[RMDB]
RNA sequence: GGGAACGACUCGAGUAGAGUCGAAAAGGGAGUGUUAAGUUGCCUUGAGAGGGUUGAUUAUGAUAAUGCAUUUGGAAGGUAUCUUGCCAACACGUAUUCCUCUUACUUGUUCUUCCAUGUAAUCACCGCUCCUGUCACUCUUCGGAGUGACAGGAGCAAAAGAAACAACAACAACAAC
Reactivity to 2A3 in 0.01 (KOAc 150mM, MgCl2 10mM, bicine 150mM(pH8.5), 24C), signal-to-noise 1, nucleotides 027 to 126: g000g020g000a050g020u040g050u070u120a090a050g020u050u050g080c040c000u040u050g030a050g040a010g110g000g020u070u070g050a070u030u170a050u140g080a040u080a180a060u200g040c030a050u100u050u120g040g020a000a040g040g000u080a050u070c070u030u110g040c060c000a010a040c030a010c120g030u010a080u120u010c050c000u000c050u050u010a060c020u070u050g040u110u010c000u070u000c020c000a020u100g050u040a120a020u070c070a100c020c020
Reactivity to DMS in 0.01 (KOAc 150mM, MgCl2 10mM, bicine 150mM(pH8.5), 24C), signal-to-noise 1, nucleotides 027 to 126: g040g010g010a060g000u000g010u010u020a110a040g040u000u010g000c090c050u000u000g000a120g000a100g000g020g010u020u030g000a070u000u000a030u010g000a140u000a030a070u050g000c050a070u000u000u000g000g010a050a070g010g000u010a060u000c060u020u000g010c080c120a070a050c110a070c110g000u020a120u000u000c020c050u000c070u000u010a100c100u030u000g040u010u010c060u000u000c010c050a070u000g000u000a080a090u000c060a030c170c050

The record gives the reactivity of an RNA of 177 nucleotides to 2A3 and DMS. For DMS, 945 sequencing reads were counted. The 2A3 profile rests on 638 reads. Values cover nucleotides 27 to 126.